[RMDB]
The record gives the reactivity of an RNA of 207 nucleotides to DMS and 2A3. It was measured as part of the RMDB library OK3TST. For DMS the reverse transcriptase was MarathonRT.
RNA sequence: GGGAACGACUCGAGUAGAGUCGAAAACUGUUCUGCACAGGAGCUGGAGGGCCUGAUCCAGGCAAUACACAAUGAUGACAACAAGGUGAGCGGAAUUGUCUCCAAACGCUGGUGAUGCCAAUGAAUUGUGUCUCAGGCUUGCCUAGUCACCUUUAUCUCGUUAUACAUUUUUCGAAAUGUAUAACGAAAAAGAAACAACAACAACAAC
Reactivity to DMS in 0.01 (KOAc 150mM, MgCl2 10mM, bicine 150mM(pH8.5), 24C), signal-to-noise 5, nucleotides 027 to 156: c030u000g010u000u010c050u010g020c050a130c050a090g010g010a160g020c040u010g000g010a160g010g020g020c040c010u000g020a070u000c070c050a100g040g000c030a090a080u010a090c060a050c030a060a070u000g020a180u010g010a090c030a040a110c050a090a110g020g020u000g010a080g000c300g010g000a060a140u010u020g010u000c050u010c030c010a060a210a140c040g000c030u000g010g020u000g000a150u000g020c010c010a050a120u000g000a090a110u000u000g030u000g010u010c060u000c020a080g020g010c030u000u000g020c010c020u000a080g000u000c020a070c040c010u000u000u000a100u010c060
Reactivity to 2A3 in 0.01 (KOAc 150mM, MgCl2 10mM, bicine 150mM(pH8.5), 24C), signal-to-noise 9, nucleotides 027 to 156: c040u030g020u090u030c040u100g030c060a040c020a070g030g020a030g010c020u040g020g020a040g030g040g010c020c010u050g030a070u060c070c020a030g060g020c040a050a050u160a080c080a000c020a040a110u120g060a050u120g020a050c020a090a010c030a160a020g040g020u050g020a020g020c020g000g060a070a090u110u100g050u040c030u000c050c000a090a080a060c050g020c050u030g000g070u060g030a040u080g020c010c020a060a060u120g060a070a070u100u090g050u020g030u050c020u010c040a000g010g010c020u010u040g020c010c000u050a050g030u070c040a120c060c000u040u080u080a180u070c080